[RMDB]
RNA sequence: GGGAACGACUCGAGUAGAGUCGAAAAUCUGCCACCAUGGAAGACAUGCCUUUCACCUUCCACCAUGACUGUGAGGCCUUCCCAGCCACGUGGAACUAUGAGUCUAUUAAACUUCUUUUUCUUUAUAAAUUACCCAGUCUCGGGUAUGCCGUGAUCACACAAGAGAGUGGUUCGCCACUCUCUUGUGAAAAGAAACAACAACAACAAC
Reactivity to 2A3 in 0.01 (KOAc 150mM, MgCl2 10mM, bicine 150mM(pH8.5), 24C), signal-to-noise 2, nucleotides 027 to 156: u070c050u080g080c020c010a000c000c030a050u070g020g000a040a000g030a020c090a160u120g010c020c020u060u120u070c030a040c010c010u060u000c030c000a000c040c040a060u140g050a110c020u050g030u070g090a080g030g020c000c000u020u020c000c000c000a020g010c030c000a040c030g020u040g000g050a020a030c030u060a120u240g030a050g030u010c010u010a140u070u210a190a080a070c040u100u080c000u060u140u010u050u000c020u090u230u060a150u140a040a240a170u110u120a040c050c000c000a050g190u050c080u070c120g030g000g000u030a030u100g010c070c010g030u040g040a040u170c120a000
Chemical mapping of a 207-nucleotide RNA with 2A3. The reactions ran in a buffer of 150 mM KOAc, 10 mM MgCl2 and 150 mM bicine (pH 8.5), at 24 C. Values are in units of 0.01, from 0 to 300, in steps of 10. 2A3 adducts were read by reverse transcription with SuperScript II with manganese.